[RMDB]
RNA sequence: GGGAACGACUCGAGUAGAGUCGAAAAGCCCGGCUCAUCUCGACAAGAGGCGGCGAUCCUCAGUGCUCUUACUCUUUUCUGUAAAGAGGAGACUGCUGGAUCCGCCGCCCAAGUUCGAGAUGGGCCAUCUCCGGGCGAGGAGUCGCGGGGGAAGCGAGAAUCACACGGAGUUCGCUCCGUGUGAUUCAAAAGAAACAACAACAACAAC
Reactivity to 2A3 in 0.01 (KOAc 150mM, MgCl2 10mM, bicine 150mM(pH8.5), 24C), signal-to-noise 1, nucleotides 027 to 156: g010c010c010c000g000g040c000u020c000a020u010c000u000c000g000a010c000a040a050g110a140g120g000c000g000g070c000g010a000u020c000c000u000c000a020g020u110g260c100u020c040u070u300a300c000u010c000u000u080u070u100c020u300g300u300a040a010a000g020a020g020g000a010g000a000c000u000g090c060u020g000g000a000u010c080c160g000c000c010g000c000c000c000a000a000g010u120u040c000g000a000g000a000u000g010g000g000c000c000a050u010c000u000c000c000g030g030g000c020g010a060g070g000a030g050u060c110g060c090g300g000g010g000g020a070a020g180c070g060a150